[RMDB]
RNA sequence: GGGAACGACUCGAGUAGAGUCGAAAAUAUAUGAAGCAAUAUCAGUUGAUCCAACCUGUCAUAGGUAUUUCAUCAGCAGGCGUUGUUGAUGAACAAAAAGGCGAAAUUGGAUACGCAGGGCCAACCAUCGGUUUUAAGGGUUCGCCCUUAAAACCGAAAAAGAAACAACAACAACAAC
Reactivity to 2A3 in 0.01 (KOAc 150mM, MgCl2 10mM, bicine 150mM(pH8.5), 24C), signal-to-noise 2, nucleotides 027 to 126: u230a000u070a000u070g030a000a070g050c020a050a130u080a090u210c050a030g100u070u080g090a000u000c000c060a000a040c000c000u100g070u240c090a020u080a110g090g000u000a080u000u020u000c010a010u000c000a000g030c010a020g300g040c150g170u090u120g030u030u030g060a000u020g000a000a000c070a070a090a000a000a020g010g000c010g090a030a030a030u050u110g000g000a000u010a120c130g000c040a020g000g020g000c000c000a070a030c010c000a060
Reactivity to DMS in 0.01 (KOAc 150mM, MgCl2 10mM, bicine 150mM(pH8.5), 24C), signal-to-noise 2, nucleotides 027 to 126: u030a140u040a150u000g030a090a110g040c220a100a040u000a020u000c010a160g000u000u000g010a200u000c030c000a040a050c070c060u010g000u010c110a030u010a030g000g000u010a010u000u010u000c010a000u030c000a000g050c000a030g000g000c120g030u000u000g040u000u000g040a010u000g030a000a000c220a150a040a040a110a110g000g000c000g000a060a000a280u000u000g070g000a030u020a040c090g000c180a160g000g000g020c020c080a070a050c060c090a180